[RMDB]
RNA sequence: GGGAACGACUCGAGUAGAGUCGAAAAGAUAUGGACUGCGUGUAGGCGUCGACGAUCUCGGAAACGAGGGAGACGCUACACAUGGCAGUCCUAAGUCAAAAGGGGGCGUUGUUCGCAACGCCCCCAAGAGCUACAUUAUGUUCGCAUAAUGUAGCUCAAAAGAAACAACAACAACAAC
Reactivity to DMS in 0.01 (KOAc 150mM, MgCl2 10mM, bicine 150mM(pH8.5), 24C), signal-to-noise 2, nucleotides 027 to 126: g000a060u000a300u000g000g000a040c000u010g000c000g020u000g010u010a100g020g020c020g000u000c000g000a090c280g010a050u000c000u000c000g000g000a190a080a240c000g010a020g000g000g000a040g010a020c000g030c000u000a020c080a010c010a090u010g030g010c000a010g000u000c000c000u000a010a050g000u010c030a100a100a150a100g010g000g000g010g000c000g010u000u000g020u000u000c160g010c000a020a000c020g010c020c000c010c000c000a010a000
Background
Structure probing data (DMS) for a 177-nucleotide construct. It was measured as part of the RMDB library TTRDEL. Conditions: 150 mM KOAc, 10 mM MgCl2 and 150 mM bicine (pH 8.5), 24 C. DMS adducts were read by reverse transcription with MarathonRT.